[RMDB]
RNA sequence: GGGAACGACUCGAGUAGAGUCGAAAAUGAAAUUUGCAUUCAGUGCCAAGAACAAUGUGAUCAUCGAGAUUUUGGUUCAAUUUUCCAAGUUGAAGAACGAUCGCCGAGAACCAAUUGCGGUUGCAACGAACUGUGAGAGAUUCGUCUCUCACAGUUCAAAAGAAACAACAACAACAAC
Reactivity to 2A3 in 0.01 (KOAc 150mM, MgCl2 10mM, bicine 150mM(pH8.5), 24C), signal-to-noise 2, nucleotides 027 to 126: u060g000a000a050a070u070u060u080g020c000a010u050u090c040a060g070u030g090c040c000a010a010g040a070a030c030a020a090u150g020u050g060a040u020c020a020u020c020g020a000g000a200u050u070u050u190g050g000u070u060c060a110a150u100u110u040u020c000c000a060a020g040u010u040g060a080a060g020a110a000c070g000a040u010c020g050c060c040g050a040g040a060a050c010c020a010a050u160u060g020c050g080g000u070u110g000c020a000a030c050
Reactivity to DMS in 0.01 (KOAc 150mM, MgCl2 10mM, bicine 150mM(pH8.5), 24C), signal-to-noise 3, nucleotides 027 to 126: u010g020a110a020a150u010u000u000g010c040a090u010u000c080a080g030u000g020c040c040a090a130g000a090a130c100a090a080u010g010u010g020a040u000c060a090u000c040g010a260g000a050u010u010u000u000g000g000u000u000c070a070a100u000u010u010u000c080c080a100a040g000u000u010g000a100a090g000a040a130c130g020a070u000c030g000c070c050g000a080g000a030a070c050c050a040a080u000u000g000c120g010g000u000u010g000c090a030a130c270
This 177-nucleotide RNA was probed chemically with 2A3 and DMS.
Values are in units of 0.01, from 0 to 300, in steps of 10.
DMS adducts were read by reverse transcription with MarathonRT.
It was measured as part of the RMDB library OK2TST.
The DMS profile rests on 1,652 reads.
The RNA was probed in 150 mM KOAc, 10 mM MgCl2 and 150 mM bicine (pH 8.5) at 24 C.
For 2A3 the reverse transcriptase was SuperScript II with manganese.